[RMDB]
RNA sequence: GGGAACGACUCGAGUAGAGUCGAAAAGAUAUGGAUGCUGGCAGCCAACAGCGUGACGGUCGGAAACGACCGCACGACAUGGCUGCCCAGCAUCCUAAGUCAAAAGGCGCAGGUUCGCCUGCGCCAACUAAAUAAUCAAGUUCGCUUGAUUAUUUAGAAAAGAAACAACAACAACAAC
Reactivity to DMS in 0.01 (KOAc 150mM, MgCl2 10mM, bicine 150mM(pH8.5), 24C), signal-to-noise 6, nucleotides 027 to 126: g010a040u000a300u010g000g010a020u010g010c000u000g000g000c000a010g000c010c000a040a090c300a220g010c010g010u000g010a170c010g020g000u000c000g010g000a120a100a210c010g010a010c010c000g010c000a010c000g000a030c090a230u010g000g010c000u000g000c140c020c000a010g000c000a000u000c000c000u000a010a080g010u010c040a090a080a130a130g000g020c010g030c000a010g010g010u000u010c260g020c000c000u000g010c000g010c000c000a010a030
Reactivity to 2A3 in 0.01 (KOAc 150mM, MgCl2 10mM, bicine 150mM(pH8.5), 24C), signal-to-noise 2, nucleotides 027 to 126: g030a000u040a030u170g000g000a000u000g020c010u020g010g020c010a020g010c000c020a140a040c100a160g060c010g000u010g040a220c010g010g020u000c000g000g020a120a050a050c010g000a000c010c010g000c000a000c040g050a020c030a020u140g010g020c000u000g000c000c000c000a000g000c000a010u000c000c000u000a000a000g000u000c010a000a010a040a260g010g000c010g020c020a000g000g050u110u240c290g120c090c000u020g000c000g000c000c000a010a000
Conditions: 150 mM KOAc, 10 mM MgCl2 and 150 mM bicine (pH 8.5), 24 C. An RNA of 177 nucleotides, treated with DMS and 2A3 and read out base by base. High DMS reactivity at an A or C suggests that its Watson-Crick edge is free. For 2A3, 10,006 sequencing reads were counted. For 2A3 the reverse transcriptase was SuperScript II with manganese. Reactivities are given for positions 27 through 126. High 2A3 reactivity points to a flexible backbone, as in loops and unpaired stretches. The DMS profile rests on 10,273 reads.